[RMDB]
RNA sequence: GGGAACGACUCGAGUAGAGUCGAAAAUAUUACUUAUUUCCAAUUGACUACCUCAUUGGUCUUGGGUAUAGGUUUGUGUGCGUUCCUGACUUUGCUCUUCUAUUAUAUUAAUAAAGUAAAACGUGCUGUGGUCCAAACUUCGGUUUGGACAAAAGAAACAACAACAACAAC
Reactivity to DMS in 0.01 (KOAc 150mM, MgCl2 10mM, bicine 150mM(pH8.5), 24C), signal-to-noise 4, nucleotides 027 to 129: u030a080u020u020a000c040u010u000a110u050u000u010c000c000a060a010u060u010g020a130c090u040a130c170c140u100c200a030u020u020g010g010u020c000u000u040g010g060g030u010a020u020a070g030g020u000u000u000g040u010g030u030g030c040g050u110u020c000c000u010g020a080c060u000u000u000g030c010u020c020u000u010c030u040a000u000u000a160u060a200u130u030a060a090u000a000a060a060g000u040a020a020a030a000c050g000u030g010c000u030g040u030g000
Reactivity to 2A3 in 0.01 (KOAc 150mM, MgCl2 10mM, bicine 150mM(pH8.5), 24C), signal-to-noise 6, nucleotides 027 to 129: u080a020u040u040a030c020u030u010a000u030u050u060c000c000a010a000u100u230g020a000c000u090a090c050c130u220c090a130u050u160g030g000u010c000u000u040g000g000g000u020a000u020a030g010g040u020u070u080g200u050g010u060g050c020g010u000u030c000c010u000g020a070c030u060u040u050g010c010u020c000u100u090c030u050a170u240u050a110u140a100u290u130a150a110u090a090a060a010g000u000a010a000a160a090c040g000u040g020c040u070g050u070g110